[RMDB]
RNA sequence: GGGAACGACUCGAGUAGAGUCGAAAACGUAAUUGAUUGAGUAUAAAUAACCUCUAGAGGGAGGUCGCGUGGAAACUAUGAUGAAACUCCUAGAAGUGGGCGUGCCUGGCAGAAGGAGUAGGUCGAAGGUCGAAAGUAUAUUCGUAUACUUUCGACCAAAAGAAACAACAACAACAAC
Reactivity to DMS in 0.01 (KOAc 150mM, MgCl2 10mM, bicine 150mM(pH8.5), 24C), signal-to-noise 4, nucleotides 027 to 126: c080g010u030a080a120u010u020g010a050u010u000g000a100g040u010a080u030a070a100a090u010a110a060c070c010u000c020u000a100g000a120g020g010g020a010g000g010u010c080g000c080g000u010g020g000a090a060a110c080u000a050u010g000a030u010g000a120a070a030c040u000c000c020u000a080g010a150a090g000u020g000g000g000c050g000u000g000c010c000u000g000g050c060a050g010a160a040g010g000a050g000u000a060g020g020u000c060g020a090a060
Reactivity to 2A3 in 0.01 (KOAc 150mM, MgCl2 10mM, bicine 150mM(pH8.5), 24C), signal-to-noise 5, nucleotides 027 to 126: c050g060u100a030a130u070u170g100a090u060u090g030a070g090u080a060u060a210a180a050u100a040a060c030c010u000c020u040a080g020a060g150g070g000a020g040g010u030c010g020c030g020u080g000g040a060a090a010c070u060a100u160g040a010u060g050a160a050a020c030u000c000c010u030a060g020a130a000g080u040g010g020g000c040g050u050g030c000c000u020g060g040c030a010g030a100a010g010g030a000g000u040a030g060g050u040c040g040a050a010